This 177-nucleotide RNA was probed chemically with DMS. Conditions: 150 mM KOAc, 10 mM MgCl2 and 150 mM bicine (pH 8.5), 24 C.
RNA sequence: GGGAACGACUCGAGUAGAGUCGAAAAGAUAUGGAAUGUACAUUUGUGCAGCGAGGGGCUAUGAUCAUCGGAAACGAUGAUCAUAGCCCUACCCACCGCUGAACUACACACCAUACAUUCCUAAGUCGUCAGAUAAGAUGUUCGCAUCUUAUCUGACAAAAGAAACAACAACAACAAC
Reactivity to DMS in 0.01 (KOAc 150mM, MgCl2 10mM, bicine 150mM(pH8.5), 24C), signal-to-noise 2, nucleotides 027 to 126: g010a210u000a290u020g010g010a020a060u000g000u000a030c300a300u000u020u020g000u000g010c000a000g030c000g020a100g010g000g000g040c000u060a000u000g010a050u000c020a010u000c000g070g020a160a080a190c030g090a000u000g000a000u000c000a000u000a030g000c000c000c000u000a030c010c030c090a300c280c010g020c000u000g010a010a020c050u000a300c090a060c090a030c300c290a110u010a010c000a140u000u000c000c000u000a110a140g000u000c150